[RMDB]
Source: RMDB library M2PK50, as collected in RNAgym. This 177-nucleotide RNA was probed chemically with 2A3 and DMS. For DMS the reverse transcriptase was MarathonRT. Values cover nucleotides 27 to 126. 2A3 adducts were read by reverse transcription with SuperScript II with manganese.
RNA sequence: GGGAACGACUCGAGUAGAGUCGAAAAGGGCGUCAUUUCGAUGACGCCCAUACGUCUACUCCGAUUGGCGAGCACGACGCCGACGGGCGCGUUUGCCAAUCGCACCGUCCAGAUUCGUCUGGACGAAAUCUGACUCCUAGUUCGCUAGGAGUCAGAUAAAAGAAACAACAACAACAAC
Reactivity to 2A3 in 0.01 (KOAc 150mM, MgCl2 10mM, bicine 150mM(pH8.5), 24C), signal-to-noise 4, nucleotides 027 to 126: g020g010g010c010g000u010c010a010u040u090u170c220g100a020u010g000a000c000g000c010c000c000a000u000a000c010g050u000c010u010a020c000u000c010c010g000a010u000u010g000g010c010g000a010g040c040a020c160g300a130c010g030c010c000g240a300c170g070g020g000c010g000c000g000u010u000u020g010c000c000a000a010u000c000g000c010a040c010c020g010u000c000c000a000g000a020u020u070c130g060u010c090u000g000g000a000c000g000a010a040
Reactivity to DMS in 0.01 (KOAc 150mM, MgCl2 10mM, bicine 150mM(pH8.5), 24C), signal-to-noise 3, nucleotides 027 to 126: g000g000g030c000g010u000c000a000u010u000u010c230g010a010u000g010a020c020g040c010c000c000a000u000a020c260g010u000c000u000a010c010u000c010c000g000a020u000u000g000g000c000g010a020g030c060a120c080g050a300c000g020c010c000g030a150c300g000g010g000c010g010c030g010u000u010u010g010c010c000a020a000u000c010g000c100a120c190c030g000u000c000c000a010g000a030u000u000c220g010u000c000u000g000g010a000c010g000a010a050